[RMDB]
RNA sequence: GGGAACGACUCGAGUAGAGUCGAAAAUUUGAACUUGCAGCUUUUGCCCUAAAAGUUGGCGAAUUGAGUGAACCAGUGUUCACGGAUUCAGGUGUACACAUUAUCAUGCGCACUGCUUAAUCAUGGGACCAUAAGAAAGCUUCGGCUUUCUUAUGGUAAAAGAAACAACAACAACAAC
Reactivity to DMS in 0.01 (KOAc 150mM, MgCl2 10mM, bicine 150mM(pH8.5), 24C), signal-to-noise 4, nucleotides 027 to 126: u010u010u000g000a070a120c130u000u010g020c020a050g010c020u000u000u000u000g010c020c020c020u000a070a040a040a020g030u000u000g020g040c060g000a060a070u010u010g010a120g020u000g000a040a040c050c170a120g010u000g010u000u000c000a030c020g000g010a050u000u010c110a140g010g010u010g000u000a050c060a040c070a080u010u010a080u010c120a080u000g000c030g010c020a040c020u000g000c060u000u000a050a060u010c070a070u000g010g010g010
Reactivity to 2A3 in 0.01 (KOAc 150mM, MgCl2 10mM, bicine 150mM(pH8.5), 24C), signal-to-noise 2, nucleotides 027 to 126: u120u020u170g040a060a030c020u050u110g000c010a000g010c030u020u030u120u100g030c000c000c000u040a050a040a010a040g010u020u060g050g020c050g010a070a080u110u120g020a070g040u040g020a030a030c000c070a130g040u050g020u260u020c020a010c010g020g010a030u080u090c050a060g060g030u000g040u100a030c010a000c020a070u040u190a100u260c040a030u040g000c010g000c060a050c060u030g000c000u080u060a010a080u070c030a120u060g100g000g000